[RMDB]
This 177-nucleotide RNA was probed chemically with DMS and 2A3. The DMS profile rests on 3,506 reads. The reactions ran in a buffer of 150 mM KOAc, 10 mM MgCl2 and 150 mM bicine (pH 8.5), at 24 C. For 2A3, 1,192 sequencing reads were counted. It was measured as part of the RMDB library M2PK50.
RNA sequence: GGGAACGACUCGAGUAGAGUCGAAAACGACAGCUUUUCGAAGCUGUCGAUUGGCAAAGGCUAGGACCGGCCACACAAAGGUCCGAUAGCAAAUCGUAACGAAGCUCGCCUGCUUCGGCAGGCGAAAAACCUGUACAUCAUUCGUGAUGUACAGGUUAAAAGAAACAACAACAACAAC
Reactivity to DMS in 0.01 (KOAc 150mM, MgCl2 10mM, bicine 150mM(pH8.5), 24C), signal-to-noise 3, nucleotides 027 to 126: c010g000a010c000a010g000c000u000u000u000u000c180g020a020a010g020c000u000g010u000c010g000a060u000u000g020g010c140a100a090a130g000g010c020u000a060g000g020a010c020c000g020g030c000c020a110c200a070c190a050a050a110g000g000u000c000c000g010a100u010a080g020c070a110a100a090u010c060g000u000a050a060c100g010a090a100g010c100u000c030g000c010c000u000g010c000u000u020c160g010g010c000a010g000g000c010g000a000a020a040
Reactivity to 2A3 in 0.01 (KOAc 150mM, MgCl2 10mM, bicine 150mM(pH8.5), 24C), signal-to-noise 1, nucleotides 027 to 126: c000g000a000c000a000g010c030u040u050u040u130c140g030a010a000g000c000u000g000u000c000g000a040u000u060g060g010c020a020a060a100g040g000c000u030a040g030g030a000c030c010g050g010c000c000a160c030a000c010a060a050a000g000g010u020c010c020g040a150u080a000g060c050a070a070a070u090c080g100u100a050a160c110g040a080a000g010c010u000c000g060c010c040u030g000c050u010u060c020g050g000c000a000g090g180c000g030a010a000a000